[RMDB]
RNA sequence: GGGAACGACUCGAGUAGAGUCGAAAAGCGUACGGCCCACUUGGUUUGCCCGGUGCCCUUGGGAUCCAGGGAGCGGGUGACCAGGUAGAGCGUCUUGAGUGCUGACUGUUCGUUCGGGAAGUGUCCAAAAUCCGCUCUGUUUCGACAGAGCGGAUUUAAAAGAAACAACAACAACAAC
Reactivity to DMS in 0.01 (KOAc 150mM, MgCl2 10mM, bicine 150mM(pH8.5), 24C), signal-to-noise 1, nucleotides 027 to 126: g010c030g010u010a130c070g010g020c010c020c020a010c020u020u000g020g000u000u000u020g050c010c000c020g040g020u000g020c040c020c010u010u020g000g030g010a110u020c060c050a070g000g000g000a140g020c010g000g020g020u000g000a000c000c000a010g000g000u000a040g030a070g000c020g000u010c020u030u000g030a260g000u000g020c040u000g000a180c070u010g020u000u000c080g020u000u000c060g040g060g010a030a250g010u000g010u000c000c040a070